The record gives the reactivity of an RNA of 177 nucleotides to DMS and 2A3. Source: RMDB library RFM100, as collected in RNAgym. The RNA was probed in 150 mM KOAc, 10 mM MgCl2 and 150 mM bicine (pH 8.5) at 24 C.
RNA sequence: GGGAACGACUCGAGUAGAGUCGAAAAGAAAGAAAGAAAGAAAAUAAAAAAGGUACAUCUGUCGAAAGUUUGGGGCGCGAAGCCGCGGAUUUAAUACGACAGCUGCGAUGAGCGGGCUACCGUGGAAUUAAUUUUCACCUUUCGAGGUGAAAAUUAAAAAAGAAACAACAACAACAAC
Reactivity to DMS in 0.01 (KOAc 150mM, MgCl2 10mM, bicine 150mM(pH8.5), 24C), signal-to-noise 2, nucleotides 027 to 126: g000a110a080a080g000a070a040a060g010a070a040a080g000a100a080a060a110u050a040a030a060a070a050a120g020g010u000a040c030a070u030c000u010g010u000c020g000a220a030a060g000u000u000u000g000g000g000g000c020g030c290g000a090a130g010c000c000g000c020g000g010a030u020u010u020a020a090u050a120c050g000a010c010a010g010c020u010g000c060g000a070u090g000a190g000c000g000g000g000c080u010a000c020c020g020u000g020g030a080a110
Reactivity to 2A3 in 0.01 (KOAc 150mM, MgCl2 10mM, bicine 150mM(pH8.5), 24C), signal-to-noise 2, nucleotides 027 to 126: g060a030a020a010g090a020a070a010g090a070a060a000g030a030a200a070a020u280a080a100a010a050a050a020g060g000u030a030c030a080u040c050u000g030u000c000g030a080a050a080g000u000u060u000g170g000g000g000c070g020c090g140a150a040g000c000c000g050c000g010g020a020u050u040u090a060a090u090a110c000g000a010c000a000g010c010u050g000c040g040a080u070g020a040g010c000g020g000g010c030u030a010c020c040g040u070g010g050a050a050